[RMDB]
RNA sequence: GGGAACGACUCGAGUAGAGUCGAAAAUUGCUUCCAUCAUUGGGUUAGGUGACUUUGCCAUUGGUGCGCCUGCUUGUUCUGCUUGAAACUGCUUCUGCUCACCAUAAGCAGCAUUAGGUAGUCUCUUAGCUCCUUGCAUAUCAGUACGCUUUGCGUAGCCAAAUGAAGGGUUCGCCCUUCAUUUGGCAAAAGAAACAACAACAACAAC
Reactivity to 2A3 in 0.01 (KOAc 150mM, MgCl2 10mM, bicine 150mM(pH8.5), 24C), signal-to-noise 2, nucleotides 027 to 156: u130u090g050c010u090u040c000c010a150u110c010a050u040u190g020g010g000u020u050a060g000g020u040g020a000c040u080u140u120g070c060c090a050u010u020g090g000u030g020c000g000c020c000u000g050c050u070u140g000u130u040c060u060g070c050u110u170g050a100a020a000c020u080g070c010u010u040c070u140g010c020u010c010a130c050c020a010u020a080a030g070c050a010g000c010a070u060u150a020g040g030u010a000g040u010c000u000c000u000u020a000g000c040u000c000c060u000u100g020c070a030u070a090u210c020a020g180u150a040c020g000c010u060u090u300g030c050g000u040a040